[RMDB]
Source: RMDB library RNAMAK, as collected in RNAgym. The record gives the reactivity of an RNA of 207 nucleotides to DMS and 2A3. For DMS the reverse transcriptase was MarathonRT. The DMS profile rests on 9,188 reads. For 2A3 the reverse transcriptase was SuperScript II with manganese. High 2A3 reactivity points to a flexible backbone, as in loops and unpaired stretches. For 2A3, 7,133 sequencing reads were counted.
RNA sequence: GGGAACGACUCGAGUAGAGUCGAAAACCUAGCGCAUUCGUGCGCUAGGAAAAAAGCGUACUACCGUUAAUGCUGCAUCCUACCCACCUCCCAAAUAGGAGAGGGAUGAACUACAGUUAACGGUAUCGCAAAAAAUAUCCACGUUCGCGUGGAUAAAUACUGAAAUAUGAUUCGUCAUAUUUCAGUAAAAAGAAACAACAACAACAAC
Reactivity to DMS in 0.01 (KOAc 150mM, MgCl2 10mM, bicine 150mM(pH8.5), 24C), signal-to-noise 3, nucleotides 027 to 156: c000c000u000a010g000c010g040c000a080u000u010c300g060u000g040c000g030c010u010a010g000g010a000a000a060a060a070a060g010c010g020u000a070c180u000a030c000c000g020u000u000a010a040u000g030c060u000g000c020a120u000c040c030u000a080c030c000c050a300c080c010u000c000c000c020a050a140a220u010a050g000g000a040g030a150g000g000g000a040u010g010a090a060c030u000a040c020a030g010u000u000a010a030c000g030g000u000a030u000c010g020c010a000a020a090a080a090a160u000a030u000c010c010a010c010g020u000u010c290g040c040g020u010g000g000a010u000a010a050a170
Reactivity to 2A3 in 0.01 (KOAc 150mM, MgCl2 10mM, bicine 150mM(pH8.5), 24C), signal-to-noise 5, nucleotides 027 to 156: c000c000u000a000g000c000g000c060a020u050u090c260g100u060g000c010g010c010u000a000g000g000a070a010a030a000a000a000g050c050g030u100a080c050u010a010c020c000g000u000u020a060a020u200g070c060u010g000c010a000u000c000c010u030a150c030c020c050a070c030c000u040c010c030c020a180a300a080u290a120g000g010a010g010a020g010g000g000a000u000g000a030a030c080u190a070c160a060g020u010u010a000a000c000g000g010u000a010u080c020g050c020a100a120a000a000a000a000u100a010u000c000c020a000c000g020u050u050c300g020c010g090u010g000g010a000u010a000a020a000